[RMDB]
RNA sequence: GGGAACGACUCGAGUAGAGUCGAAAAGCCACCCGCGACCUCGCCGAGACGGCCGCCGGGCAGGGGUGGACGAUCGUGACCGGCGGCGCCUACGGCAUCGACACCGCCGCCGUCGAAGGCGCGCUCAGCUACGUCCUCAUUUCGAUGAGGACGUAGCAAAAGAAACAACAACAACAAC
Reactivity to DMS in 0.01 (KOAc 150mM, MgCl2 10mM, bicine 150mM(pH8.5), 24C), signal-to-noise 1, nucleotides 027 to 126: g010c020c040a160c020c020c030g000c090g000a040c050c020u000c180g010c020c000g010a290g010a020c000g010g000c000c000g010c010c030g010g000g000c030a000g040g030g000g000u000g000g010a050c110g020a030u000c060g000u000g020a010c010c020g000g000c000g020g000c050g000c030c030u000a150c000g000g020c000a140u020c070g000a110c160a100c150c030g000c030c020g020c090c020g020u000c080g020a230a100g060g000c000g020c200g000c130u000c080a100